[RMDB]
RNA sequence: GGGAACGACUCGAGUAGAGUCGAAAACAGACUUUGGUAUAUCAUGUAAUGGAGUAUUAUUCAGCAAUAAAAAGAAAUGAUCUAUCAAGCCACAAAAAUAUAUGGAGGAACCAUAAAUGCAUAUUGCUAAAUGAAAGAAGCCAGUCUGAAGAGGCUACGUAGAAUGUACGUUCGCGUACAUUCUACGAAAAGAAACAACAACAACAAC
Reactivity to DMS in 0.01 (KOAc 150mM, MgCl2 10mM, bicine 150mM(pH8.5), 24C), signal-to-noise 1, nucleotides 027 to 156: c000a070g000a000c030u000u000u000g000g000u000a000u000a020u020c060a050u000g000u000a020a100u000g010g000a070g050u000a070u000u020a050u000u010c150a040g000c080a090a100u000a010a100a090a220a100g020a040a080a020u000g000a060u020c050u000a030u000c070a090a130g000c040c040a050c070a010a040a070a110a130u000a130u000a140u000g000g000a100g000g030a110a110c030c040a080u000a020a070a100u000g020c090a110u000a060u010u000g030c230u000a060a070a060u000g020a040a070a000g000a020a060g050c000c020a070g000u000c080u030g030a100a140g020a210g020g000c030u010a000
Reactivity to 2A3 in 0.01 (KOAc 150mM, MgCl2 10mM, bicine 150mM(pH8.5), 24C), signal-to-noise 3, nucleotides 027 to 156: c020a000g040a020c000u020u050u040g000g040u040a020u020a020u070c040a050u120g070u090a120a060u070g040g010a020g030u040a040u120u020a010u040u120c030a000g030c010a030a080u100a180a160a030a000a000g030a020a090a000u050g030a030u010c010u030a030u040c030a010a020g010c040c030a030c040a010a050a120a030a010u210a030u040a030u080g030g000a090g060g040a030a060c020c020a030u090a110a120a020u100g030c030a050u070a030u120u190g020c000u030a090a130a150u100g050a030a010a080g060a030a000g030c020c030a010g030u020c000u060g030a070a010g030a030g090g000c000u020a020